[RMDB]
RNA sequence: GGGAACGACUCGAGUAGAGUCGAAAAUCUGGACCGUUCGCGGUCCAGAAACUACGGAGAAUGCGACUCGGUAUAUAAACGCAACCCUUGGAAACAAGGGAACACUCUGCUGCUUCGGCAGCAGAAACAACGAUAAAAGUUUCGACUUUUAUCGUUGAAAAGAAACAACAACAACAAC
Reactivity to 2A3 in 0.01 (KOAc 150mM, MgCl2 10mM, bicine 150mM(pH8.5), 24C), signal-to-noise 2, nucleotides 027 to 126: u010c000u000g000g010a010c000c010g020u040u040c280g000c010g100g010u020c000c000a000g000a010a000a000c010u070a030c030g100g010a010g020a110a080u030g010c000g040a040c010u010c020g000g110u040a150u030a020u030a260a020a010c020g010c020a040a170c000c000c000u010u010g000g010a040a030a020c000a000a000g000g000g010a000a000c020a020c040u020c000u000g000c000u000g000c000u030u050c170g110g000c000a000g010c000a000g000a000a000a000
Reactivity to DMS in 0.01 (KOAc 150mM, MgCl2 10mM, bicine 150mM(pH8.5), 24C), signal-to-noise 5, nucleotides 027 to 126: u000c000u000g000g000a000c000c010g020u000u010c220g030c010g030g000u010c000c000a000g000a010a070a110c080u010a110c120g010g010a010g020a030a050u000g020c010g000a050c000u010c000g020g000u000a080u010a060u000a010a020a020c030g010c020a040a300c010c010c010u000u000g000g000a140a130a210c000a010a010g000g010g000a070a050c190a080c100u000c000u000g000c010u000g010c000u000u010c200g010g000c010a010g010c000a000g000a010a100a130

Source: RMDB library M2PK50, as collected in RNAgym.
Structure probing data (2A3 and DMS) for a 177-nucleotide construct.
DMS adducts were read by reverse transcription with MarathonRT.
For DMS, 5,756 sequencing reads were counted.
The RNA was probed in 150 mM KOAc, 10 mM MgCl2 and 150 mM bicine (pH 8.5) at 24 C.